The record gives the reactivity of an RNA of 177 nucleotides to 2A3.
Values cover nucleotides 27 to 126.
Source: RMDB library RFM100, as collected in RNAgym.
The RNA was probed in 150 mM KOAc, 10 mM MgCl2 and 150 mM bicine (pH 8.5) at 24 C.
2A3 adducts were read by reverse transcription with SuperScript II with manganese.
RNA sequence: GGGAACGACUCGAGUAGAGUCGAAAACGAAUGAUGAUAACCUAAAUAAUAAUCUCUUGCUGAUUCCUUUUGAUAUUCCGUUCUGGAAUAUUGGGGGAUACUCUGUGACUCUUUAUUCAUAGUUACUUUAGGCUCUAAAGUUCGCUUUAGAGCCUAAAAAAGAAACAACAACAACAAC
Reactivity to 2A3 in 0.01 (KOAc 150mM, MgCl2 10mM, bicine 150mM(pH8.5), 24C), signal-to-noise 3, nucleotides 027 to 126: c040g040a060a090u100g000a010u090g020a000u040a090a030c030c000u100a190a080a060u140a090a020u070a080a140u030c030u010c000u060u220g100c040u040g120a130u120u050c030c000u030u100u160u300g010a010u050a000u000u000c000c000g060u150u190c140u300g000g000a000a000u000a000u000u010g000g020g010g010g000a000u050a080c000u020c020u040g030u010g060a020c010u150c040u090u130u120a050u230u020c010a020u020a220g000u050u030a010c000u010